RNA sequence: GGGAACGACUCGAGUAGAGUCGAAAAGUGCGGAUUGAAAUUCAUGGGAGCCUCUCCAUAAUGGAUGAACGCCGCGUUAGUUCGCGCAGUCGCGACGUAAACGCUCUGUAUUCCCGUUCAGGCCUCAGCAUUAGGGAUUAUUCGUAAUCCCUAAUGCAAAAGAAACAACAACAACAAC
Reactivity to DMS in 0.01 (KOAc 150mM, MgCl2 10mM, bicine 150mM(pH8.5), 24C), signal-to-noise 9, nucleotides 027 to 126: g010u010g010c010g000g000a120u010u000g010a130a120a030u000u000c040a030u000g010g010g000a070g010c170c080u010c120u010c010c010a070u010a100a040u000g000g000a030u000g000a110a120c100g000c020c030g010c000g020u000u000a140g010u000u000c080g010c070g010c220a130g010u010c040g010c010g010a030c040g010u000a050a080a070c040g010c010u000c050u010g000u010a190u000u000c000c010c010g020u010u000c120a070g010g000c210c140u000c110a180
Reactivity to 2A3 in 0.01 (KOAc 150mM, MgCl2 10mM, bicine 150mM(pH8.5), 24C), signal-to-noise 4, nucleotides 027 to 126: g090u080g000c010g000g070a130u100u160g060a120a110a090u070u040c030a030u060g020g020g010a050g050c030c020u120c020u000c020c010a050u250a270a040u130g010g010a000u030g010a070a040c050g000c020c010g010c020g000u000u030a060g020u070u030c020g000c020g010c100a070g160u300c030g010c020g020a020c010g010u040a120a120a010c030g000c010u040c020u050g050u050a090u020u040c000c010c000g000u100u070c050a040g070g000c020c010u090c040a000
Description: This 177-nucleotide RNA was probed chemically with DMS and 2A3. Conditions: 150 mM KOAc, 10 mM MgCl2 and 150 mM bicine (pH 8.5), 24 C. DMS adducts were read by reverse transcription with MarathonRT. For 2A3, 6,213 sequencing reads were counted. 2A3 is a SHAPE reagent: it acylates the 2'-hydroxyl of flexible nucleotides of all four kinds.